Record summary: This 177-nucleotide RNA was probed chemically with DMS and 2A3. For DMS the reverse transcriptase was MarathonRT. For 2A3, 6,573 sequencing reads were counted.
[RMDB]
RNA sequence: GGGAACGACUCGAGUAGAGUCGAAAACGAGUGGGUUUGCGUUCCACUAUUAUGUUAACAAUCCACAGCAACUAUCAGAUUUUGAUUUCGUCAUCAUAGAUGAGUGUCAUGUCCAAGAUAGCUCAACGUAUGGCUAGUAGUUCGCUACUAGCCAUACAAAAGAAACAACAACAACAAC
Reactivity to DMS in 0.01 (KOAc 150mM, MgCl2 10mM, bicine 150mM(pH8.5), 24C), signal-to-noise 3, nucleotides 027 to 126: c070g020a140g010u010g000g000g010u000u000u000g030c050g010u010u010c030c010a050c120u020a140u030u050a010u070g000u010u030a050a110c200a130a010u000c000c020a040c150a140g010c050a050a270c000u000a000u000c000a110g020a050u000u020u000u000g000a020u010u010u000c050g010u030c020a040u010c260a140u020a180g020a000u000g000a020g030u000g020u000c010a020u000g010u000c010c080a070a110g010a000u000a020g000c200u050c050a140a070c200
Reactivity to 2A3 in 0.01 (KOAc 150mM, MgCl2 10mM, bicine 150mM(pH8.5), 24C), signal-to-noise 7, nucleotides 027 to 126: c040g010a010g010u010g000g010g010u030u030u070g010c020g000u030u020c000c040a000c010u010a070u250u050a120u150g180u070u130a130a050c040a030a050u030c030c030a050c030a030g020c020a020a080c010u030a020u020c020a020g020a030u290u260u080u040g010a020u080u200u120c100g210u010c040a040u000c050a130u110a160g040a020u010g000a010g030u040g010u000c000a010u030g000u000c000c040a050a050g000a020u020a020g020c030u050c110a050a040c090